[RMDB]
RNA sequence: GGGAACGACUCGAGUAGAGUCGAAAAUGCUACACGGUUUAUGAAGGAUCUUCAUUUUACAGGGACCAAUGGCGUUGGUGAGGUUGGCCGUGGGAUAGCGCUUACUUUGUUUAACCUUGCUGAUACAAAUCUUUUGUUUAUUCGUAAACAAAAGAUUAAAAGAAACAACAACAACAAC
Reactivity to DMS in 0.01 (KOAc 150mM, MgCl2 10mM, bicine 150mM(pH8.5), 24C), signal-to-noise 9, nucleotides 027 to 126: u010g010c030u000a080c080a090c090g000g010u000u000u000a040u010g000a060a060g010g000a130u010c030u000u000c030a050u000u000u010u000a110c180a130g000g010g010a080c030c040a060a120u000g010g010c060g020u000u000g010g010u000g000a040g010g010u000u000g010g000c020c090g010u010g000g010g000a140u010a060g020c060g010c090u000u010a110c110u000u000u000g010u000u010u000a050a060c040c020u000u000g010c040u000g010a080u000a070c140a070
Reactivity to 2A3 in 0.01 (KOAc 150mM, MgCl2 10mM, bicine 150mM(pH8.5), 24C), signal-to-noise 5, nucleotides 027 to 126: u070g000c010u050a020c030a020c060g040g020u010u100u070a050u070g060a060a030g100g060a120u050c010u060u010c040a060u040u130u110u120a070c070a050g070g000g040a020c030c020a060a070u130g090g000c060g040u030u060g010g020u040g010a030g000g040u070u060g040g000c030c000g010u010g000g010g030a050u050a020g010c040g000c040u020u050a090c020u080u180u140g100u040u130u090a020a020c000c000u000u030g000c020u050g010a030u010a120c050a010